Annotation
Chemical mapping of a 177-nucleotide RNA with 2A3 and DMS.
[RMDB]
RNA sequence: GGGAACGACUCGAGUAGAGUCGAAAAGGCGAGCGAAAGCGGAAGAGGCUAAACCAUGGGUGUGUGAUAGCCGGCGGGCGUUGCAUUCGUGGGGUUGUGGGAUCCGUCUUGUCAAUUCUGCCGGAUUCAUAGGACUAACAUUCGUGUUAGUCCUAUGAAAAGAAACAACAACAACAAC
Reactivity to 2A3 in 0.01 (KOAc 150mM, MgCl2 10mM, bicine 150mM(pH8.5), 24C), signal-to-noise 9, nucleotides 027 to 126: g010g010c020g020a020g000c040g050a080a020a000g020c010g040g010a050a040g100a030g110g030c060u090a170a040a030c000c010a030u040g020g000g040u040g010u030g020u050g090a110u110a100g020c000c010g050g040c120g090g010g000c030g070u090u130g000c010a010u030u030c020g010u040g010g020g000g020u100u080g030u120g050g070g010a010u020c010c010g050u040c050u070u090g110u050c020a040a130u120u010c020u080g030c020c010g020g000a020u010u010
Reactivity to DMS in 0.01 (KOAc 150mM, MgCl2 10mM, bicine 150mM(pH8.5), 24C), signal-to-noise 6, nucleotides 027 to 126: g020g020c020g020a040g010c270g010a040a060a090g000c010g000g010a060a070g000a250g010g010c040u000a030a080a080c030c020a040u010g010g000g030u000g020u010g000u010g000a110u030a080g010c000c000g010g040c270g020g010g010c030g020u020u010g010c030a040u000u010c040g030u010g000g000g010g010u030u010g000u000g010g010g000a140u010c020c030g000u030c020u010u010g020u000c050a070a230u010u000c060u020g030c010c010g000g000a150u000u010
Background:
2A3 adducts were read by reverse transcription with SuperScript II with manganese. The reactions ran in a buffer of 150 mM KOAc, 10 mM MgCl2 and 150 mM bicine (pH 8.5), at 24 C.